Source information
Chemical mapping of a 207-nucleotide RNA with 2A3 and DMS. DMS adducts were read by reverse transcription with MarathonRT. For 2A3, 1,544 sequencing reads were counted. The data come from the RNA Mapping Database (RMDB), library RNAMAK.
RNA sequence: GGGAACGACUCGAGUAGAGUCGAAAACCUCUGUUCGCAGAGGGUGGGGAUAUGGAUCGAACUACGCUGAGGCCUAGCGUUGAAAUAAGCUCGGAAACGAGCUUAUGGAGCUAGGUGUAGGCGCGAUCCUAAGUCAGUUAGGGCAGUUCGCUGCCAACAUCACGGUUUAGUUCGCUAAACCGUGAUGAAAAGAAACAACAACAACAAC
Reactivity to 2A3 in 0.01 (KOAc 150mM, MgCl2 10mM, bicine 150mM(pH8.5), 24C), signal-to-noise 2, nucleotides 027 to 156: c000c000u000c010u010g090u020u110c270g080c170a000g000a040g020g060g010u160g010g050g000g000a020u000a070u190g000g000a000u030c000g040a110a100c080u150a070c300g000c010u020g020a060g000g100c000c000u000a000g000c000g160u270u030g010a000a000a000u000a000a000g020c000u000c010g010g000a070a090a030c000g000a000g010c000u000u000a010u010g010g000a050g000c000u000a010g000g020u140g000u010a000g000g000c000g000c000g010a000u000c000c000u000a060a000g060u060c060a000g000u150u300a110g000g040g000c000a000g000u050u180c140g050c160u000g000c010c010a000a030
Reactivity to DMS in 0.01 (KOAc 150mM, MgCl2 10mM, bicine 150mM(pH8.5), 24C), signal-to-noise 1, nucleotides 027 to 156: c030c000u030c010u010g000u000u010c240g070c020a060g000a000g010g000g020u020g000g000g010g000a130u050a200u000g030g000a030u000c000g000a160a300c030u000a030c020g030c000u010g000a300g000g030c000c000u000a020g000c000g010u000u000g000a270a150a010u000a010a070g000c000u000c000g000g010a120a090a300c020g020a020g000c000u000u000a000u000g000g010a130g010c000u010a020g000g060u000g000u000a190g000g000c040g000c000g010a030u010c010c000u020a060a110g020u000c050a140g000u000u000a210g000g030g000c010a050g000u000u000c250g030c030u000g020c010c010a000a200